[RMDB]
RNA sequence: GGGAACGACUCGAGUAGAGUCGAAAAGCUGUCAACGACGCACUCGCCGACUACGAGUACGAUCUGGUCUGUCUCGACGGCUACAUGCAAAUUCUCUCGGACACAUUCCUCGAGGCCCAGCCGACGACAAAAUACCGGUAUUCGUACCGGUAUUUUGAAAAGAAACAACAACAACAAC
Reactivity to DMS in 0.01 (KOAc 150mM, MgCl2 10mM, bicine 150mM(pH8.5), 24C), signal-to-noise 7, nucleotides 027 to 126: g010c020u010g000u010c050a080a120c210g000a070c030g020c050a050c030u000c040g020c090c060g010a090c120u020a130c050g010a040g020u000a060c050g000a080u020c050u020g000g000u000c040u020g000u010c040u010c140g000a090c060g000g000c030u010a040c110a070u010g010c090a070a070a070u020u000c020u010c010u010c060g020g000a070c110a060c130a120u010u010c010c020u000c050g000a070g010g000c010c020c040a070g010c030c020g000a100c090g010a180
Reactivity to 2A3 in 0.01 (KOAc 150mM, MgCl2 10mM, bicine 150mM(pH8.5), 24C), signal-to-noise 9, nucleotides 027 to 126: g020c030u030g020u050c020a060a030c090g060a010c020g010c030a030c020u020c010g030c040c040g130a080c040u110a060c060g030a010g040u060a050c040g050a150u030c050u090g040g070u040c070u090g070u010c020u040c080g060a050c010g010g000c000u030a020c030a040u160g050c020a030a090a100u130u010c040u000c000u020c040g030g020a020c020a000c010a170u060u040c010c000u020c030g030a050g030g010c010c010c010a010g010c020c020g070a120c020g010a020
Conditions: 150 mM KOAc, 10 mM MgCl2 and 150 mM bicine (pH 8.5), 24 C. The record gives the reactivity of an RNA of 177 nucleotides to DMS and 2A3. For DMS the reverse transcriptase was MarathonRT. The 2A3 profile rests on 36,320 reads.